[RMDB]
RNA sequence: GGGAACGACUCGAGUAGAGUCGAAAAAUGACGCUGGAACCGUCCCGGAAGUGGGAGAAAGGGAGGCGAAGAUAGAAGGGGAGACCCCGAUCAGAAUGCCGAUCGGGUGCAAGCACCUCUGGAGUCAAGGGAUCAUUCUUCGGAAUGAUCAAAAGAAACAACAACAACAAC
Reactivity to DMS in 0.01 (KOAc 150mM, MgCl2 10mM, bicine 150mM(pH8.5), 24C), signal-to-noise 9, nucleotides 027 to 129: a070u030g010a040c070g010c000u000g000g000a090a090c130c050g020u000c010c020c010g000g000a100a070g020u030g030g030g020a040g020a030a100a080g000g000g000a070g020g030c090g000a050a020g020a110u050a030g030a080a020g010g010g000g000a110g000a190c090c000c000c010g020a000u010c020a080g020a150a120u030g030c130c090g000a030u010c000g020g000g040u000g040c110a050a050g010c130a110c060c010u000c030u020g010g000a080g000u010c060a070a080g000g010
Reactivity to 2A3 in 0.01 (KOAc 150mM, MgCl2 10mM, bicine 150mM(pH8.5), 24C), signal-to-noise 9, nucleotides 027 to 129: a010u110g020a010c030g010c030u050g020g010a050a050c020c010g030u030c010c000c020g060g040a140a060g070u200g050g030g000a020g070a060a080a040g020g010g010a020g020g000c030g010a020a010g020a030u160a030g060a040a030g000g000g000g010a030g010a030c000c000c000c000g000a000u000c000a020g180a300a070u200g130c080c060g000a000u010c000g000g000g000u020g030c030a040a040g030c020a040c020c010u020c020u020g030g010a030g010u040c050a040a060g100g000